[RMDB]
RNA sequence: GGGAACGACUCGAGUAGAGUCGAAAAAAGAGGAAAGAAGAACACGGACGCGAACCCGUAAGUGGAACCCUGAUCCUUUAUUGGGGGGUACACUCGAGGAGUGGAAGGCGCUGCCCGGGGGGAACCGAUAUCCGACAGUUCGCUGUCGGAAAAAGAAACAACAACAACAAC
Reactivity to DMS in 0.01 (KOAc 150mM, MgCl2 10mM, bicine 150mM(pH8.5), 24C), signal-to-noise 6, nucleotides 027 to 129: a040a060g020a000g000g000a010a010a010g030a000a000g020a060a040c030a050c070g030g030a090c110g000c060g030a050a100c060c010c020g040u050a090a040g030u000g010g040a170a180c040c010c020u030g030a110u000c150c140u020u020u060a070u040u030g030g000g000g000g020g000u000a180c070a040c000u010c020g000a060g020g000a040g050u040g040g000a060a070g040g040c160g040c000u000g020c020c000c010g060g020g020g050g030g000a040a030c000c050g010a090u050a090
Reactivity to 2A3 in 0.01 (KOAc 150mM, MgCl2 10mM, bicine 150mM(pH8.5), 24C), signal-to-noise 3, nucleotides 027 to 129: a010a000g080a000g020g030a030a030a020g020a030a000g000a010a020c020a000c030g010g020a010c060g000c010g030a030a060c020c000c010g020u040a030a010g020u020g020g040a050a040c000c000c010u020g060a070u150c050c030u150u190u160a120u140u100g000g010g000g000g010g000u050a030c020a000c000u020c020g020a050g020g000a030g010u090g020g010a030a070g020g000c050g010c100u080g000c010c010c010g010g000g000g020g010g000a000a010c010c020g000a010u020a060
An RNA of 170 nucleotides, treated with DMS and 2A3 and read out base by base. DMS (dimethyl sulfate) methylates the pairing face of unpaired adenines and cytosines. It was measured as part of the RMDB library 15KLIB. As a SHAPE reagent, 2A3 marks flexible, mostly unpaired nucleotides at the ribose 2'-OH. The RNA was probed in 150 mM KOAc, 10 mM MgCl2 and 150 mM bicine (pH 8.5) at 24 C.